[RMDB]
RNA sequence: GGGAACGACUCGAGUAGAGUCGAAAAGUCGGCAUUGAAGUCGGUGCCGUCAUGGAACUUGAUGCCGUCACGCAGCUUGAUCGUGUAGACCAGGCCGUCCGGGCUGACUUCGUAGCCGGUCGCCAGACAUCGCAUAGUGCUUCGGCACUAUGCGAUGAAAAGAAACAACAACAACAAC
Reactivity to 2A3 in 0.01 (KOAc 150mM, MgCl2 10mM, bicine 150mM(pH8.5), 24C), signal-to-noise 2, nucleotides 027 to 126: g020u010c010g010g000c020a050u060u160g020a010a000g010u000c000g080g010u070g300c020c020g010u060c050a040u080g090g000a120a190c030u040u070g020a020u070g040c000c020g060u030c010a010c050g130c040a070g060c090u130u150g010a070u190c050g000u080g050u170a020g050a090c010c040a010g000g020c010c000g010u000c010c020g000g000g000c010u010g010a010c000u000u010c040g040u040a040g000c000c000g000g000u050c010g040c010c000a050g020a040
Reactivity to DMS in 0.01 (KOAc 150mM, MgCl2 10mM, bicine 150mM(pH8.5), 24C), signal-to-noise 2, nucleotides 027 to 126: g060u000c020g010g010c000a300u000u030g020a010a010g030u000c010g010g000u000g040c060c020g000u010c090a040u000g010g010a070a060c060u010u000g000a120u000g020c000c020g000u000c090a060c110g050c110a130g010c110u000u000g010a050u010c030g040u000g000u010a120g010a050c110c020a010g000g070c020c020g000u000c110c040g000g010g020c010u000g000a040c010u000u000c020g000u000a220g020c020c010g030g000u000c040g010c030c000a090g010a200